[RMDB]
RNA sequence: GGGAACGACUCGAGUAGAGUCGAAAAGAUAUGGACGACGACGAAGUGGAUGGAGAAGGCUAUCGGAAACGAUAGCUUCUGCGAAGUCCACAGAGUCGUCCUAAGUCAAACGCUGCUUCGGCAGCGACGUAUGGGGACCGUUCGCGGUCCCCAUACGAAAAGAAACAACAACAACAAC
Reactivity to DMS in 0.01 (KOAc 150mM, MgCl2 10mM, bicine 150mM(pH8.5), 24C), signal-to-noise 1, nucleotides 027 to 126: g000a160u000a300u050g010g030a050c040g020a000c000g040a230c170g040a150a190g030u000g010g000a000u010g030g000a300g030a060a000g020g000c010u000a020u000c000g000g000a090a120a150c000g000a020u010a000g020c040u000u000c070u000g000c020g010a300a120g000u000c000c000a000c000a020g000a280g010u000c000g050u000c010c010u000a050a210g000u000c080a120a020a130c130g040c010u030g000c000u000u010c180g040g000c000a000g020c000g020a000
Background
The data come from the RNA Mapping Database (RMDB), library TTRDES. Structure probing data (DMS) for a 177-nucleotide construct. The reactions ran in a buffer of 150 mM KOAc, 10 mM MgCl2 and 150 mM bicine (pH 8.5), at 24 C. DMS adducts were read by reverse transcription with MarathonRT.